[RMDB]
RNA sequence: GGGAACGACUCGAGUAGAGUCGAAAACGGAAGAGUCUUCUGACACUUCUAGCCUAUUCAGCUUCGCGUCCUUGAGGCCUGGCGUAACGCGGCUCUUGCCACCAGGUCGCCUCCGCUAGUCGAGCGGACUUGGUCUCUUCCGCCCAAAGCCCUUUUUAACUUAGAUUAGCUUCGGCUAAUCUAAGUUAAAAGAAACAACAACAACAAC
Reactivity to 2A3 in 0.01 (KOAc 150mM, MgCl2 10mM, bicine 150mM(pH8.5), 24C), signal-to-noise 2, nucleotides 027 to 156: c030g000g010a000a020g020a010g020u020c030u170u140c120u200g050a070c050a060c080u120u060c060u130a020g000c000c000u170a260u160u200c130a030g050c040u170u180c070g030c040g020u010c030c030u050u060g040a060g030g010c000c000u000g000g000c080g110u150a190a030c140g040c070g200g050c030u050c090u160u270g000c030c000a020c000c020a010g000g000u000c000g030c000c020u060c010c020g000c000u030a080g070u120c070g080a020g070c000g000g010a020c000u090u150g060g020u000c000u000c000u020u000c010c000g050c030c010c000a060a020a040g000c030c000c040u020u010u000u000u000
Description: The record gives the reactivity of an RNA of 207 nucleotides to 2A3. Values cover nucleotides 27 to 156. Conditions: 150 mM KOAc, 10 mM MgCl2 and 150 mM bicine (pH 8.5), 24 C. Source: RMDB library VIROID, as collected in RNAgym. For 2A3, 1,424 sequencing reads were counted.